[RMDB]
RNA sequence: GGGAACGACUCGAGUAGAGUCGAAAAGGUCUCACUCUGUCACCCAGACUGGAGUGCAGUGGCACAGUUCUCUGCAACCUCAGCCUUUGGGCUCAAAUGACCCUCCUACCUCAGUCUCCUGAGUAGCACAAGGUACACAGUUCGCUGUGUACCUUGUAAAAGAAACAACAACAACAAC
Reactivity to DMS in 0.01 (KOAc 150mM, MgCl2 10mM, bicine 150mM(pH8.5), 24C), signal-to-noise 3, nucleotides 027 to 126: g010g000u010c050u000c070a110c070u000c050u000g000u020c120a150c020c040c040a090g010a030c020u010g000g010a030g010u000g000c090a010g010u000g010g000c040a110c130a130g010u010u010c030u000c020u000g010c030a050a090c050c010u000c040a040g030c020c010u000u000u010g010g030g000c100u010c050a030a060a100u010g010a090c030c020c010u000c020c020u000a110c090c010u000c030a040g000u010c090u000c080c020u000g040a050g020u020a090g020c130
Reactivity to 2A3 in 0.01 (KOAc 150mM, MgCl2 10mM, bicine 150mM(pH8.5), 24C), signal-to-noise 2, nucleotides 027 to 126: g050g000u030c030u000c020a040c030u060c070u060g040u040c020a020c020c000c010a010g050a040c040u040g040g040a050g050u020g000c010a000g010u070g040g000c060a090c060a300g060u270u010c030u000c000u000g000c010a100a140c020c010u050c010a030g010c010c000u060u090u120g040g000g050c050u050c060a100a120a090u130g000a040c000c020c030u000c020c000u040a110c010c020u070c010a050g110u090c050u120c090c020u000g040a020g040u060a020g030c070